[RMDB]
RNA sequence: GGGAACGACUCGAGUAGAGUCGAAAAGAAGACUGGCAAAAGAUAGGAAAGAACAUCCUUGUUCGUGCAAGCAGUGAAUUAGGGGACAUUUCACUAAAAGUGAUUAUCAUUUUGGUCCCACACAAAGAUAUGUCCAGGCCUAAAUCGGAAAGGAUCGGUGUCAGGAAGGAUUCGUCCUUCCUGACACAAAAGAAACAACAACAACAAC
Reactivity to 2A3 in 0.01 (KOAc 150mM, MgCl2 10mM, bicine 150mM(pH8.5), 24C), signal-to-noise 2, nucleotides 027 to 156: g050a020a050g140a070c030u020g010g000c100a020a010a020a020g080a170u050a010g060g150a070a140a030g040a080a010c050a000u080c000c040u090u070g070u120u000c080g010u030g010c010a010a060g010c020a020g040u060g080a050a120u120u120a140g020g000g000g000a020c030a030u020u020u010c020a050c030u100a140a100a050a000g020u020g000a050u040u280a220u090c130a080u010u190u230u140g070g040u030c000c120c000a000c000a000c010a000a160a020g030a010u050a000u130g040u020c000c000a030g080g030c000c000u040a070a070a000u170c040g020g010a110a000a000g030g040a020u000c100g040